[RMDB]
RNA sequence: GGGAACGACUCGAGUAGAGUCGAAAAGAUAUGGACCCUUCAAGCUUUUGACGCUUGGUAUGUCGGAAACGACAUAAGAGAGCGAUAAGCUUAAGGGUCCUAAGUCAAAGUGCGGCUUCGGCCGCACCGCCGCAUAAAUGUUCGCAUUUAUGCGGCGAAAAGAAACAACAACAACAAC
Reactivity to 2A3 in 0.01 (KOAc 150mM, MgCl2 10mM, bicine 150mM(pH8.5), 24C), signal-to-noise 2, nucleotides 027 to 126: g010a000u050a010u190g000g010a010c000c000c000u000u000c260a050a010g000c000u150u200u300u300g300a190c080g000c000u000u040g020g060u100a010u000g020u000c010g010g040a000a060a090c030g000a020c040a000u010a000a100g300a020g000a000g030c050g140a160u070a300a000g000c010u010u000a000a000g000g000g010u020c000c000u000a000a000g000u000c020a050a060a040g020u000g020c020g000g000c030u030u200c300g110g000c060c000g000c000a000c020
Reactivity to DMS in 0.01 (KOAc 150mM, MgCl2 10mM, bicine 150mM(pH8.5), 24C), signal-to-noise 2, nucleotides 027 to 126: g040a050u000a300u000g000g000a050c000c000c000u000u000c300a000a000g000c000u000u000u000u000g020a180c090g010c000u000u000g050g000u000a000u010g010u000c000g020g000a060a030a240c010g000a030c010a000u000a030a070g030a180g010a000g000c000g030a170u000a010a010g000c010u000u000a000a020g010g000g000u000c000c010u000a000a100g000u010c030a070a110a120g000u000g010c030g000g030c000u000u010c240g010g020c000c000g020c000a000c010
This 177-nucleotide RNA was probed chemically with 2A3 and DMS.
The RNA was probed in 150 mM KOAc, 10 mM MgCl2 and 150 mM bicine (pH 8.5) at 24 C.
It was measured as part of the RMDB library TTRDES.
2A3 is a SHAPE reagent: it acylates the 2'-hydroxyl of flexible nucleotides of all four kinds.